[RMDB]
RNA sequence: GGGAACGACUCGAGUAGAGUCGAAAAUCGAAUCUGUAAGAGGUUAAAUGGGGUUUGACAAAAAUUUUUCCGCCGCUAAUAUACGACCCCACACGAUUCCUCUGUAGUUCAGUCGGUAGAACGGCGGCGCGGUAUUAAUAUUCGUAUUAAUACCGCGAAAAGAAACAACAACAACAAC
Reactivity to 2A3 in 0.01 (KOAc 150mM, MgCl2 10mM, bicine 150mM(pH8.5), 24C), signal-to-noise 6, nucleotides 027 to 126: u100c010g020a030a070u100c010u040g040u130a110a040g020a030g060g050u130u220a040a080a140u080g000g000g000g070u010u070u200g140a060c210a030a110a070a130a170u110u110u040u140u020c000c020g000c010c000g010c050u080a100a030u100a060u040a160c050g010a010c000c010c050c000a010c010a000c010g120a030u130u080c010c010u020c000u000g030u050a040g020u040u060c020a020g040u020c020g040g030u100a050g020a140a020c030g000g000c000g000g000
Reactivity to DMS in 0.01 (KOAc 150mM, MgCl2 10mM, bicine 150mM(pH8.5), 24C), signal-to-noise 5, nucleotides 027 to 126: u020c030g010a070a070u050c010u010g030u010a100a060g010a030g000g000u010u020a030a130a190u010g010g000g000g010u000u000u030g060a130c220a060a050a070a100a100u010u010u000u020u020c000c010g000c020c000g040c130u000a050a090u010a100u010a120c100g000a020c010c000c000c010a040c080a100c160g000a170u040u020c020c000u010c040u010g030u030a070g010u000u020c080a060g010u010c030g010g010u020a050g010a060a110c030g000g020c000g010g000
Structure probing data (2A3 and DMS) for a 177-nucleotide construct.
For 2A3 the reverse transcriptase was SuperScript II with manganese.
For 2A3, 3,553 sequencing reads were counted.
Source: RMDB library OK1LIB, as collected in RNAgym.